[RMDB]
RNA sequence: GGGAACGACUCGAGUAGAGUCGAAAAUAGUUUCGUGACAAGAGAUUGAUAGACUCGCAAACUAAUGGCUUGAGUUAUGUGUCUUUAGUUUGUUAAAUGAAGACAUAACCUAUGGACGUAGACAAAUAUGUUGGCAGGUGUUUGGACGUGGGUUCGACAUUAUCAUAGUGUUCGCACUAUGAUAAUGAAAAGAAACAACAACAACAAC
Reactivity to DMS in 0.01 (KOAc 150mM, MgCl2 10mM, bicine 150mM(pH8.5), 24C), signal-to-noise 4, nucleotides 027 to 156: u010a090g000u000u000u010c020g000u000g020a150c100a120a110g010a090g020a140u000u000g010a150u010a080g010a070c030u000c030g030c040a030a080a070c020u000a040a060u000g010g010c010u000u000g000a110g010u000u000a050u010g040u010g010u000c010u010u000u000a040g010u000u010u000g020u000u010a050a090a070u000g020a070a060g010a060c020a030u000a020a060c030c020u000a110u000g010g010a060c020g010u000a090g020a080c050a030a060a120u000a060u010g020u000u000g020g010c040a060g010g030u000g010u010u000u010g030g010a070c090g010u010g010g010g020u000u010c020g030a230
Reactivity to 2A3 in 0.01 (KOAc 150mM, MgCl2 10mM, bicine 150mM(pH8.5), 24C), signal-to-noise 8, nucleotides 027 to 156: u130a010g030u020u020u060c070g020u060g060a040c060a090a020g010a020g010a060u070u130g060a060u100a110g030a030c010u010c040g000c020a010a010a030c010u030a040a030u050g020g000c010u040u060g060a040g110u070u040a050u070g030u000g010u000c000u010u010u000a030g020u010u040u080g070u050u080a030a080a040u110g050a020a010g050a010c000a010u020a010a030c000c020u040a110u080g040g010a010c030g040u030a020g020a060c050a020a100a010u150a040u110g080u090u050g030g010c030a020g000g050u030g020u050u080u060g030g010a020c050g030u070g020g050g000u030u030c020g000a010
The record gives the reactivity of an RNA of 207 nucleotides to DMS and 2A3. DMS adducts were read by reverse transcription with MarathonRT. Conditions: 150 mM KOAc, 10 mM MgCl2 and 150 mM bicine (pH 8.5), 24 C. The DMS profile rests on 13,393 reads.